[RMDB]
RNA sequence: GGGAACGACUCGAGUAGAGUCGAAAAGUUAGGUUCGCCUAACCACAAUGCGUACUACGUGGUAUGCCUAAGGGUCAACAGCAGAGCUCCCAAAUAGGAGCUCUGACAUGACCCUAGGCUAAGCCACGUAUCGCUACUAUAGCCGUUCGCGGCUAAACGGGCGGUAAAGAUUCGUCUUUACCGCCCGAAAAGAAACAACAACAACAAC
Reactivity to 2A3 in 0.01 (KOAc 150mM, MgCl2 10mM, bicine 150mM(pH8.5), 24C), signal-to-noise 1, nucleotides 027 to 156: g050u030u030a040g030g010u060u050c210g140c010c050u010a000a010c010c010a080c030a080a070u170g030c000g040u070a060c020u000a020c030g000u000g020g000u120a080u230g000c000c000u080a280a210g020g020g000u050c040a040a040c000a240g020c000a000g000a000g000c000u060c000c000c000a150a060a110u300a050g000g000a000g000c070u030c000u000g030a060c000a050u030g010a000c000c040c000u000a000g000g000c000u000a020a000g010c000c000a000c000g000u000a000u000c000g010c000u000a000c010u030a020u130a020g010c070c000g050u140u130c300g030c050g180g040c010u180a300a010a030
Source information
Conditions: 150 mM KOAc, 10 mM MgCl2 and 150 mM bicine (pH 8.5), 24 C. An RNA of 207 nucleotides, treated with 2A3 and read out base by base. For 2A3, 516 sequencing reads were counted. For 2A3 the reverse transcriptase was SuperScript II with manganese. It was measured as part of the RMDB library RNAMAK.